[RMDB]
RNA sequence: GGGAACGACUCGAGUAGAGUCGAAAAAAUGCCGCCUCAGUUCCAAGCUCUUUCGUGGCACUGUAAACAGUCCUAUAGAGUUAGGGGCAGUCAACCACGUUGCGAAGCUAAAUUAUCUGGUCGAGAGUUACGAUUCCCUACUUCGGUAGGGAAUCAAGCAGGAAUAAUACUUCGGUAUUAUUCCUGCAAAAGAAACAACAACAACAAC
Reactivity to 2A3 in 0.01 (KOAc 150mM, MgCl2 10mM, bicine 150mM(pH8.5), 24C), signal-to-noise 2, nucleotides 027 to 156: a000a020u080g030c030c010g020c010c000u050c000a060g000u070u030c020c020a030a020g020c030u010c010u020u060u080c120g010u050g020g010c050a020c020u000g050u100a080a140a090c030a080g080u010c010c000u050a060u070a100g160a030g080u100u060a040g010g000g000g000c010a000g010u020c010a000a050c010c000a020c030g020u040u040g030c080g150a070a020g000c030u060a060a100a080u120u090a070u050c040u040g000g040u050c040g010a000g000a010g140u090u150a020c060g010a010u010u000c000c010c020u010a000c010u030u030c120g080g000u000a010g020g000g020a000a000u000c000a000a010
Reactivity to DMS in 0.01 (KOAc 150mM, MgCl2 10mM, bicine 150mM(pH8.5), 24C), signal-to-noise 1, nucleotides 027 to 156: a060a000u010g000c000c030g060c020c010u010c130a100g000u000u000c030c040a120a300g000c030u000c010u020u000u000c050g020u000g000g040c070a010c040u000g020u020a080a050a130c000a160g030u010c000c020u000a090u000a070g010a220g030u010u000a050g010g100g040g000c000a030g020u000c070a020a040c050c020a140c060g020u000u000g010c010g010a080a080g020c070u000a000a040a070u000u000a080u010c060u000g010g010u010c080g000a210g020a210g010u030u000a000c100g010a070u010u010c000c000c010u000a030c010u000u020c300g070g000u000a010g040g020g040a000a000u000c000a030a240
Source: RMDB library M2RFPK, as collected in RNAgym. Chemical mapping of a 207-nucleotide RNA with 2A3 and DMS. For 2A3, 1,271 sequencing reads were counted. The reactions ran in a buffer of 150 mM KOAc, 10 mM MgCl2 and 150 mM bicine (pH 8.5), at 24 C. Values cover nucleotides 27 to 156.